[RMDB]
RNA sequence: GGGAACGACUCGAGUAGAGUCGAAAAGAUAUGGACCGUACACUAUAGCGACGAUCUAGGAUCGGAAACGAUCCUAGGGAGCUACGUGUGACGGUCCUAAGUCAAAACGCAGUGUUCGCACUGCGAACCGACGUACCAAGUUCGCUUGGUACGUCGGAAAAGAAACAACAACAACAAC
Reactivity to 2A3 in 0.01 (KOAc 150mM, MgCl2 10mM, bicine 150mM(pH8.5), 24C), signal-to-noise 3, nucleotides 027 to 126: g020a020u010a010u070g000g000a010c000c000g000u080a030c040a010c020u260a160u300a300g020c020g300a300c010g000a080u050c000u020a010g010g000a010u000c010g020g000a010a010a000c010g020a000u000c030c000u000a010g000g000g000a000g000c000u210a240c150g020u020g010u140g160a030c000g010g000u000c000c000u000a000a000g000u020c020a010a000a030a060c040g000c010a000g000u010g070u060u200c250g090c130a010c010u010g000c000g020a000a010
Reactivity to DMS in 0.01 (KOAc 150mM, MgCl2 10mM, bicine 150mM(pH8.5), 24C), signal-to-noise 1, nucleotides 027 to 126: g000a000u000a130u010g000g000a010c000c000g010u000a030c000a030c000u000a180u010a060g020c000g000a060c300g000a030u000c000u000a000g000g000a020u000c000g010g000a040a000a050c000g000a010u000c000c000u010a020g000g010g020a020g040c000u000a020c190g010u000g010u000g000a040c000g040g000u000c000c000u000a010a040g000u000c000a050a030a140a260c020g030c010a020g000u000g010u000u010c280g050c000a020c010u000g000c000g000a050a030